[RMDB]
RNA sequence: GGGAACGACUCGAGUAGAGUCGAAAAUUUUUGGUUGUUGGAAGAUGAGCUACCCCAUGUUGCAGAUCGACGUGUUCCCAACGCAAUGACAAGAUUUCACCUUGUCGCAUUGCUGUUUCCAGCGCCAGUGACUGAAUCCAUUCGUGGAUUCAGUCACAAAAGAAACAACAACAACAAC
Reactivity to DMS in 0.01 (KOAc 150mM, MgCl2 10mM, bicine 150mM(pH8.5), 24C), signal-to-noise 1, nucleotides 027 to 126: u000u020u000u000u000g030g000u000u000g000u010u000g000g000a050a070g000a130u000g000a080g000c050u010a060c070c020c040c010a060u020g000u030u010g020c050a080g000a070u000c030g020a060c060g030u010g000u000u000c010c000c010a090a130c130g010c070a030a010u000g000a050c000a000a000g000a220u000u000u000c300a140c110c010u000u000g000u000c040g050c140a080u000u010g000c000u010g000u000u000u000c000c000a050g010c060g020c040c050a130
The record gives the reactivity of an RNA of 177 nucleotides to DMS.
The RNA was probed in 150 mM KOAc, 10 mM MgCl2 and 150 mM bicine (pH 8.5) at 24 C.